[RMDB]
RNA sequence: GGGAACGACUCGAGUAGAGUCGAAAACGUUGUCAUCGACAACACCCAAUGCAUUCAUGCUCUGUAAGGAUGCGCCGAAAGGUGAGCAAGCCCGAGUUGCCCAGACCUGAAAUGCAACACUUUAGAGAAAACCCGAAGCAGUUCGCUGCUUCGGGAAGUCAAGAAAAAGCUUCGGCUUUUUCUUGACAAAAGAAACAACAACAACAAC
Reactivity to 2A3 in 0.01 (KOAc 150mM, MgCl2 10mM, bicine 150mM(pH8.5), 24C), signal-to-noise 1, nucleotides 027 to 156: c010g010u000u000g010u000c110a210u160c300g020a000c000a010a000c000a000c030c000c000a000a060u050g010c000a010u000u050c010a050u120g000c000u010c000u000g030u000a020a000g000g010a000u000g000c040g020c030c000g090a170a000a000g020g060u030g040a080g000c010a000a030g040c010c020c010g150a120g070u120u120g090c000c010c010a050g020a050c040c030u040g030a120a000a000u120g040c000a030a030c020a090c070u160u240u260a060g010a020g020a110a090a030a020c000c000c000g000a010a010g010c010a000g020u040u180c240g060c100u000g000c010u000u000c000g000g020g000a000a000

An RNA of 207 nucleotides, treated with 2A3 and read out base by base.